Annotation:
Chemical mapping of a 207-nucleotide RNA with 2A3. For 2A3 the reverse transcriptase was SuperScript II with manganese. Values cover nucleotides 27 to 156. The RNA was probed in 150 mM KOAc, 10 mM MgCl2 and 150 mM bicine (pH 8.5) at 24 C.
RNA sequence: GGGAACGACUCGAGUAGAGUCGAAAAGAAAGAAAGAAGCGAGCUGGCGUAGCCGCACGGGCAACCGUCAAUCCAGCACUUCACAAGUCUUGUCGUUCUGACAGGACAUCCAUCAACCCACCGGGAAAAAAGGACUACAGCUUCGGCUGUAGUCCAAUCUUACAACAUGCUUCGGCAUGUUGUAAGAAAAAGAAACAACAACAACAAC
Reactivity to 2A3 in 0.01 (KOAc 150mM, MgCl2 10mM, bicine 150mM(pH8.5), 24C), signal-to-noise 2, nucleotides 027 to 156: g020a000a030a020g040a020a140a010g010a010a000g010c060g080a020g000c070u000g020g000c010g080u040a030g050c110c030g060c040a020c090g000g010g020c050a070a030c110c010g010u030c010a010a070u010c000c010a000g000c040a060c010u030u010c020a070c040a150a080g020u000c000u000u010g000u020c010g110u240u170c090u240g010a000c000a030g000g000a000c000a000u000c000c020a090u050c030a070a100c000c000c020a030c080c120g010g000g030a060a100a030a010a060a040g000g000a020c000u000a000c000a000g030c000u060u130c200g150g020c000u010g000u000a000g000u000c000c000a000a000